[RMDB]
RNA sequence: GGGAACGACUCGAGUAGAGUCGAAAAUUUGGAUACCAGAGAGGUUAGGAGACAGCUUCUAAAGAUUUAUCUUGGCGAGGGGAAACCCAGGGUAGCUCCCAUCUGAGUACGUCGCAUCCUAACAUGCCUAGAUUUUACAGUUCGCUGUAAAAUCUAGAAAAGAAACAACAACAACAAC
Reactivity to DMS in 0.01 (KOAc 150mM, MgCl2 10mM, bicine 150mM(pH8.5), 24C), signal-to-noise 6, nucleotides 027 to 126: u010u040u020g020g010a120u030a070c040c020a080g000a110g010a110g010g010u010u000a050g020g000a080g010a090c160a120g000c040u010u010c100u000a050a050a030g000a050u020u010u020a040u020c010u000u000g010g010c100g000a130g000g020g010g000a070a060a100c080c000c020a070g000g010g000u000a060g010c060u000c010c020c040a110u000c080u000g010a060g010u020a040c090g010u000c040g010c070a110u000c030c010u000a030a040c110a080u030g000c190
Reactivity to 2A3 in 0.01 (KOAc 150mM, MgCl2 10mM, bicine 150mM(pH8.5), 24C), signal-to-noise 8, nucleotides 027 to 126: u100u060u130g100g010a040u060a080c010c040a020g030a000g010a040g110g050u060u050a020g020g020a030g020a060c030a050g080c010u040u020c020u110a080a090a040g040a040u080u130u100a060u080c020u020u060g030g000c060g070a110g000g080g010g040a030a060a040c010c000c000a010g010g020g000u010a020g030c020u060c000c020c000a030u020c030u050g060a050g040u050a050c070g020u020c020g000c040a040u010c000c010u020a050a050c050a040u080g010c000
Chemical mapping of a 177-nucleotide RNA with DMS and 2A3. Source: RMDB libraries RFM100 and RFMREP, as collected in RNAgym. For DMS the reverse transcriptase was MarathonRT.